Structure probing data (DMS and 2A3) for a 177-nucleotide construct.
For DMS, 2,059 sequencing reads were counted.
[RMDB]
RNA sequence: GGGAACGACUCGAGUAGAGUCGAAAAAUGGAAAAGAAAACAUGGAAGGGACCCCAGUUUGAGGAAGAUGUCAACUUGGGAAGUGGAACGCGGGCAGUAGGGAAGCCUCUCCUCAAUUCUGAUACUACAUCCUACGAGCAUUCGUGCUCGUAGGAUGAAAAGAAACAACAACAACAAC
Reactivity to DMS in 0.01 (KOAc 150mM, MgCl2 10mM, bicine 150mM(pH8.5), 24C), signal-to-noise 2, nucleotides 027 to 126: a040u020g000g000a030a030a130a030g020a140a070a030a060c090a040u020g010g050a090a060g000g020g000a150c060c000c000c000a110g000u010u000u010g020a090g000g020a110a050g000a080u050g000u000c080a060a020c030u090u030g000g050g000a130a080g030u000g000g070a050a040c060g020c140g000g000g010c110a040g000u050a060g010g010g010a040a090g000c070c030u000c040u000c010c000u000c020a020a120u020u010c050u000g000a040u010a070c220u000a090
Reactivity to 2A3 in 0.01 (KOAc 150mM, MgCl2 10mM, bicine 150mM(pH8.5), 24C), signal-to-noise 3, nucleotides 027 to 126: a000u120g020g020a030a080a000a000g160a010a080a010a000c060a030u070g000g040a040a050g030g000g040a050c000c010c000c030a020g020u030u050u060g060a050g030g000a070a070g020a030u110g050u150c040a040a000c040u050u010g010g020g040a000a070g010u040g030g020a120a030c020g000c040g040g000g000c030a030g060u130a040g070g020g000a010a010g000c000c000u030c000u000c000c010u020c010a010a010u130u020c040u100g030a040u010a160c020u020a060
The data come from the RNA Mapping Database (RMDB), library OK1LIB. For 2A3 the reverse transcriptase was SuperScript II with manganese.